[RMDB]
RNA sequence: GGGAACGACUCGAGUAGAGUCGAAAAUAAGACUUCGGUCUUAAACAAUUCCUAAGUCCCACUUGGACCGUCCUUACAGGCAACAGCUCAUCGGAAACGAUGAGACAUGCCUGUAGGACGCUAGUGGGAUAUGGACCACUGACUACUUCGGUAGUAACGUAAUUGUGUAGUUCGCUACACAAUUACGAAAAGAAACAACAACAACAAC
Reactivity to 2A3 in 0.01 (KOAc 150mM, MgCl2 10mM, bicine 150mM(pH8.5), 24C), signal-to-noise 8, nucleotides 027 to 156: u070a010a000g010a000c010u020u130c300g100g000u000c000u010u010a060a100a020c060a050a170u160u060c000c000u030a150a020g030u000c000c010c000a010c030u030u050g070g100a190c060c060g000u000c000c010u110u190a010c000a000g000g000c010a030a020c020a220g020c000u000c000a000u000c000g040g040a080a070a070c020g000a000u000g010a000g030a010c010a030u020g000c000c000u000g000u000a000g000g000a000c000g000c000u000a000g000u000g000g000g000a000u000a000u020g000g020a010c010c030a100c220u180g080a010c000u010a000c000u050u090c220g100g000u010a010g010u030a100a030
Reactivity to DMS in 0.01 (KOAc 150mM, MgCl2 10mM, bicine 150mM(pH8.5), 24C), signal-to-noise 2, nucleotides 027 to 156: u000a040a010g010a060c020u000u000c300g060g010u010c010u010u010a040a100a120c080a130a170u000u000c000c000u000a100a210g020u000c000c000c000a030c020u010u000g080g000a040c210c020g040u000c000c000u000u020a010c000a020g000g010c010a060a040c050a160g000c000u010c000a020u000c000g000g000a230a120a300c000g010a000u000g010a030g000a010c020a300u000g010c010c010u000g020u000a010g020g010a010c020g000c000u010a000g020u000g000g000g020a010u000a030u000g000g000a070c090c000a180c120u020g020a060c030u000a010c050u000u030c280g060g020u000a020g030u000a060a210
Structure probing data (2A3 and DMS) for a 207-nucleotide construct. The reactions ran in a buffer of 150 mM KOAc, 10 mM MgCl2 and 150 mM bicine (pH 8.5), at 24 C. DMS adducts were read by reverse transcription with MarathonRT.